[RMDB]
About this RNA:
Structure probing data (2A3) for a 207-nucleotide construct. For 2A3 the reverse transcriptase was SuperScript II with manganese. The reactions ran in a buffer of 150 mM KOAc, 10 mM MgCl2 and 150 mM bicine (pH 8.5), at 24 C.

RNA sequence: GGGAACGACUCGAGUAGAGUCGAAAAAGCCUGGUCGAUACGUCGACCAGGCAAUGCCGCCACAACGGCUUCCUGGCGUGGCGGAUCUCAUCCAAUGGAGCAACGCUCCGGAUACGUCCGGACCGAAAAAAGCUCUGCUUCUUCGGAAGCAGAGCAACACAUGAUCGAUGUUCGCAUCGAUCAUGUGAAAAGAAACAACAACAACAAC
Reactivity to 2A3 in 0.01 (KOAc 150mM, MgCl2 10mM, bicine 150mM(pH8.5), 24C), signal-to-noise 2, nucleotides 027 to 156: a010g300c000c000u000g090g000u000c000g010a010u000a070c120g080u000c000g000a000c000c000a000g000g000c000a000a010u020g010c000c000g000c010c000a000c010a010a020c030g050g000c000u190u110c020c010u010g010g000c020g000u000g010g010c030g000g000a000u020c030u040c020a100u050c030c090a070a130u200g000g000a030g010c040a100a070c040g000c040u000c000c000g000g010a020u030a020c140g070u000c000c000g010g020a040c040c040g120a110a070a010a020a010a000g010c000u000c010u010g010c000u000u000c000u010u060c160g110g000a020a000g000c010a000g000a000g000c000a000a000